[RMDB]
Notes:
The data come from the RNA Mapping Database (RMDB), library OK2TRN. This 177-nucleotide RNA was probed chemically with DMS. Reactivities are given for positions 27 through 126. The reactions ran in a buffer of 150 mM KOAc, 10 mM MgCl2 and 150 mM bicine (pH 8.5), at 24 C.

RNA sequence: GGGAACGACUCGAGUAGAGUCGAAAAACUCGGACCUGGUCGGUCUCGGGCUUCUCUAGUUGCUUCUCACCACUUGAACCCUGCGCUCCGAGCGAGUUGCCCCCCGAGGAGACUAGCAAACCUGUGAGCAUGAUUAACGAUUCGUCGUUAAUCAUGCAAAAGAAACAACAACAACAAC
Reactivity to DMS in 0.01 (KOAc 150mM, MgCl2 10mM, bicine 150mM(pH8.5), 24C), signal-to-noise 2, nucleotides 027 to 126: a080c020u000c000g010g000a100c030c000u000g030g010u010c260g010g000u000c020u030c030g020g000g020c050u030u000c040u010c030u000a120g010u010u020g000c020u000u010c040u000c080a130c100c080a080c080u020u000g000a090a160c080c050c070u000g020c050g030c030u010c020c010g030a100g010c060g010a050g000u000u010g010c010c000c010c000c010c030g000a070g010g020a060g000a050c060u000a060g020c190a020a050a130c050c030u020g000u010g020a250